[RMDB]
RNA sequence: GGGAACGACUCGAGUAGAGUCGAAAACAUCGUGUUUUGUGGAGACUAUGUGUGUUUUUCACCAGAUCCUUAUAAAUUGUGUGUGAGGCUGGGAAAGACUUUGAAUAUUCGUAGUUACUACGAGCUCAAACCGAAAGAUCUUCGGAUCUUUCGGUUUAAAAGAAACAACAACAACAAC
Reactivity to DMS in 0.01 (KOAc 150mM, MgCl2 10mM, bicine 150mM(pH8.5), 24C), signal-to-noise 2, nucleotides 027 to 126: c040a130u000c120g000u020g010u000u000u000u020g080u000g000g030a300g010a050c010u000a020u000g000u010g020u010g000u000u000u000u000u000c000a070c000c000a030g000a080u000c000c000u020u000a030u010a050a130a230u000u000g020u000g040u010g000u000g010a010g010g000c000u000g000g000g000a050a010a020g010a020c040u000u010u000g010a160a140u010a150u010u000c010g040u000a030g010u000u000a120c040u000a000c010g000a010g010c070u000c070
Reactivity to 2A3 in 0.01 (KOAc 150mM, MgCl2 10mM, bicine 150mM(pH8.5), 24C), signal-to-noise 1, nucleotides 027 to 126: c000a060u080c060g030u000g040u110u240u050u180g000u020g020g060a080g070a070c060u000a010u060g060u030g000u000g060u030u010u040u050u010c120a220c070c010a000g060a090u240c030c030u080u060a100u070a070a300a170u300u300g090u060g020u000g000u000g100a010g000g000c000u000g000g000g010a000a000a000g000a000c000u020u110u180g100a130a030u140a130u010u090c000g010u010a010g000u020u020a080c000u030a000c000g000a040g000c010u060c080